Chemical mapping of a 177-nucleotide RNA with 2A3. 2A3 adducts were read by reverse transcription with SuperScript II with manganese. Reactivities are given for positions 27 through 126.
RNA sequence: GGGAACGACUCGAGUAGAGUCGAAAAACUGUUACUUGACAGCAGCAUAUGAACUGGAACACCCAAUGCAAAAACAGGAAAAACUUCAAAGUGCCCUUGCAAGUACUUAUUUGCUCAUGAAGUUGCCUCUGGCCUAUGUGUUCGCACAUAGGCCAGAAAAAGAAACAACAACAACAAC
Reactivity to 2A3 in 0.01 (KOAc 150mM, MgCl2 10mM, bicine 150mM(pH8.5), 24C), signal-to-noise 2, nucleotides 027 to 126: a000c100u060g000u000u000a160c180u100u190g130a060c000a080g020c000a000g010c040a000u140a060u270g190a070a110c150u090g000g070a200a000c040a130c000c050c000a010a220u140g010c020a000a000a000a220a300c000a000g000g000a000a000a000a140a240c000u000u000c010a090a040a000g000u010g060c000c070c000u060u020g000c000a000a000g060u070a100c000u060u060a130u160u140u180g090c070u130c040a180u200g000a140a000g030u000u000g120c000c000